[RMDB]
RNA sequence: GGGAACGACUCGAGUAGAGUCGAAAACGCCAUUCGCCUCCAAAUAGCUAUCUUUUUCAUCAUUAUCGACGGUAAAUGCAAUUGUUUUAUGCCUAACUAACUGUUUAUGCAAUUGAGCAAUAUCCGAAAUUCACCACUUGUUCGCAAGUGGUGAAUUAAAAGAAACAACAACAACAAC
Reactivity to 2A3 in 0.01 (KOAc 150mM, MgCl2 10mM, bicine 150mM(pH8.5), 24C), signal-to-noise 1, nucleotides 027 to 126: c010g080c000c000a050u140u030c070g040c020c010u030c020c030a040a070a020u120a010g000c050u090a060u070c010u000u060u000u010u120c050a050u010c000a010u030u150a100u150c020g100a060c040g050g000u000a000a070a000u090g010c010a050a040u030u000g010u110u170u030u090a070u080g030c000c010u030a070a070c010u020a040a040c030u110g000u050u090u030a060u020g000c000a010a060u000u030g000a000g060c000a030a010u050a030u100c010c010g040a010
Reactivity to DMS in 0.01 (KOAc 150mM, MgCl2 10mM, bicine 150mM(pH8.5), 24C), signal-to-noise 2, nucleotides 027 to 126: c110g010c020c020a060u010u000c130g020c030c000u010c010c020a060a120a110u010a100g010c070u000a040u010c010u010u000u000u040u000c070a050u000c120a050u000u000a120u000c150g000a130c050g000g000u000a050a100a100u020g000c030a040a020u000u000g010u000u000u000u000a090u020g010c010c060u020a040a120c120u000a100a100c140u010g010u010u020u000a020u010g000c040a060a040u010u000g010a100g000c070a030a070u010a120u010c000c060g010a050